[RMDB]
RNA sequence: GGGAACGACUCGAGUAGAGUCGAAAAUAUGUACAAGUGCCUUGUCUUUGCUAUCUUCUACUACGCAAUUUACUUGUACUUUGUCCUUACAUUCCCCUCAUUUAAGAGGAAUGUGGCAUUGUUCUACCUUGCUGUAGUGAUUGUACCGCACGUGAGCUCUAAGCUGUACAUUCGUGUACAGCUUAGAAAAAGAAACAACAACAACAAC
Reactivity to 2A3 in 0.01 (KOAc 150mM, MgCl2 10mM, bicine 150mM(pH8.5), 24C), signal-to-noise 7, nucleotides 027 to 156: u120a040u080g040u040a050c040a090a070g030u020g040c030c010u060u070g030u070c030u050u100u160g040c020u040a090u100c050u130u040c040u080a060c010u020a020c040g010c010a030a020u040u090u090a120c080u090u090g020u020a010c000u020u030u030g050u090c010c000u040u070a020c010a010u010u000c010c030c000c000u040c020a260u170u190u170a130a020g010a020g020g000a000a010u010g010u020g030g000c020a010u010u040g020u060u000c000u020a060c030c010u030u050g000c080u110g020u030a020g000u020g050a040u040u070g030u060a050c020c030g040c010a030c060g050u060g100a010g010c000
Reactivity to DMS in 0.01 (KOAc 150mM, MgCl2 10mM, bicine 150mM(pH8.5), 24C), signal-to-noise 3, nucleotides 027 to 156: u000a050u020g010u000a070c040a050a080g010u000g000c050c090u000u000g020u010c040u000u010u010g020c030u000a100u010c130u000u000c040u010a080c030u000a030c050g000c020a050a040u000u000u000a040c070u000u000g010u000a020c010u010u000u010g020u010c010c010u000u000a030c010a030u010u000c000c000c000c020u010c050a200u010u000u010a040a010g010a010g010g010a010a010u000g010u000g000g000c020a050u000u000g010u000u010c040u000a070c070c040u000u000g030c000u000g030u000a050g010u010g000a140u000u000g020u000a090c030c020g020c050a080c120g020u000g000a130g020c080